RNA sequence: GGGAACGACUCGAGUAGAGUCGAAAAUAGACGAGAAGAAUAGCACUCGUCAAUCACCACCCUUUCGGUGAGACGAGUGGUGAAUGCGAAAGGGUGGACUGAGGUUAGCAUUCACCCAUCUUCAAGAGAUAGUUAUGAGAUUCGUCUCGUAGCUAUCAAAAGAAACAACAACAACAAC
Reactivity to DMS in 0.01 (KOAc 150mM, MgCl2 10mM, bicine 150mM(pH8.5), 24C), signal-to-noise 7, nucleotides 027 to 126: u020a100g000a040c010g010a020g010a100a070g010a150a100u040a100g020c200a100c010u000c000g000u000c010a110a130u030c080a190c000c000a030c020c000c020u000u000u000c020g000g010u020g000a080g010a070c140g000a090g020u020g020g010u000g010a020a020u000g000c010g010a020a050a020g000g000g030u000g000g000a020c090u040g010a110g000g000u020u020a100g000c020a010u000u000c010a020c020c010c070a120u030c090u020u010c060a080a050g010a300
Reactivity to 2A3 in 0.01 (KOAc 150mM, MgCl2 10mM, bicine 150mM(pH8.5), 24C), signal-to-noise 9, nucleotides 027 to 126: u190a020g010a010c030g010a000g030a220a090g110a180a160u180a180g110c060a030c050u000c000g000u000c010a000a050u060c010a000c000c000a010c010c010c000u010u030u040c070g080g020u140g020a070g040a080c110g040a030g040u100g010g000u010g000a010a010u030g010c030g010a020a010a010g020g020g010u050g030g020a020c060u110g060a070g190g030u090u140a020g010c000a000u000u010c000a010c020c010c010a050u030c050u130u040c070a090a020g040a000
Chemical mapping of a 177-nucleotide RNA with DMS and 2A3.
DMS adducts were read by reverse transcription with MarathonRT.
The DMS profile rests on 26,510 reads.
The reactions ran in a buffer of 150 mM KOAc, 10 mM MgCl2 and 150 mM bicine (pH 8.5), at 24 C.
2A3 adducts were read by reverse transcription with SuperScript II with manganese.